[RMDB]
RNA sequence: GGGAACGACUCGAGUAGAGUCGAAAACUAGACGGGUUCGCCCGUCUAGAAACGGAGCGAAUAGGGGGCUUCGCCUCCGGGCCAGCCCUUCCGCUGACCCCCAAAGCUCAACCUUCGGGUUGAGCAAGAAAUACCAAAGGUUCGCCUUUGGUAUUUCAAAAGAAACAACAACAACAAC
Reactivity to DMS in 0.01 (KOAc 150mM, MgCl2 10mM, bicine 150mM(pH8.5), 24C), signal-to-noise 5, nucleotides 027 to 126: c010u000a000g000a010c010g010g000g010u000u010c230g010c010c000c000g010u000c000u000a010g010a040a090a120c060g000g000a040g010c030g000a080a070u010a170g010g000g000g000g020c190u000u010c240g000c030c010u000c180c090g000g010g020c040c150a070g000c010c020c030u000u000c050c020g000c040u000g000a180c020c010c000c030c030a080a130a120g000c010u000c010a000a010c000c000u000u020c200g010g010g010u000u000g010a010g010c000a020a020
Reactivity to 2A3 in 0.01 (KOAc 150mM, MgCl2 10mM, bicine 150mM(pH8.5), 24C), signal-to-noise 4, nucleotides 027 to 126: c000u000a000g000a000c000g010g000g020u040u080c170g050c040c000c000g000u000c000u000a000g010a000a000a000c010g040g030a010g080c010g020a120a070u180a300g000g010g020g020g020c010u040u020c040g010c020c010u010c040c050g010g020g010c020c010a010g000c000c000c000u080u080c050c020g000c040u130g210a300c000c000c000c000c020a060a070a000g010c000u000c000a000a000c000c000u040u080c280g040g000g000u000u010g000a000g000c000a000a000